[RMDB]
RNA sequence: GGGAACGACUCGAGUAGAGUCGAAAAUGCUGAGCUUUCGAGCUCAGCAGAGGCAAGGAAGCAGCGCAACGAGACAAGACGAGCAUAAGAUCGAGCAUGCUACAAUACGGCACUUCGGUGCCGUAAAAUGCGUUUCGAUUUUCGAAUCGAAACGCAUAAAAGAAACAACAACAACAAC
Reactivity to DMS in 0.01 (KOAc 150mM, MgCl2 10mM, bicine 150mM(pH8.5), 24C), signal-to-noise 1, nucleotides 027 to 126: u000g020c020u000g000a020g000c050u010u000u010c190g020a010g040c000u000c000a000g040c010a000g000a070g000g050c090a100a050g000g010a050a070g020c070a020g000c110g000c090a060a010c030g050a150g020a100c120a020a050g050a110c100g010a070g010c000a050u000a100a030g000a020u020c080g000a090g040c080a020u000g000c060u000a060c110a070a200u010a000c000g010g000c000a020c000u000u000c150g000g000u000g030c020c000g020u000a010a000a100

An RNA of 177 nucleotides, treated with DMS and read out base by base.
For DMS the reverse transcriptase was MarathonRT.